RNA sequence: GGGAACGACUCGAGUAGAGUCGAAAAUACGCUAUUCUUGGGUGCGGAAGUGUCGGUUACGCGGUGGCCGAAGAACUCGUUGAGGAAGGUAGAGAUGUUCUCAUUCUUGAUAAAGAUGAGAGUCGUGUUGAGUCGUUGCGUGAUCAGGACUUAAACGCGACUUUCGAUCUUUCGAGAUCGAAAGUCGAAAAGAAACAACAACAACAAC
Reactivity to 2A3 in 0.01 (KOAc 150mM, MgCl2 10mM, bicine 150mM(pH8.5), 24C), signal-to-noise 1, nucleotides 027 to 156: u090a040c010g000c070u030a030u190u000c010u060u030g040g000g000u030g050c020g020g020a010a130g030u010g010u050c000g040g010u020u090a050c040g070c040g110g040u020g020g030c020c010g000a010a010g000a000a000c000u000c070g020u060u090g000a020g000g010a040a010g090g000u010a020g020a000g000a100u030g050u000u030c000u000c030a030u060u040c020u090u060g030a090u050a300a040a000g000a000u020g000a000g000a000g010u000c010g000u070g020u030u000g000a000g010u000c050g140u170u030g080c070g090u110g050a240u200c030a060g010g010a010c000u040u050a190a060a050c010g000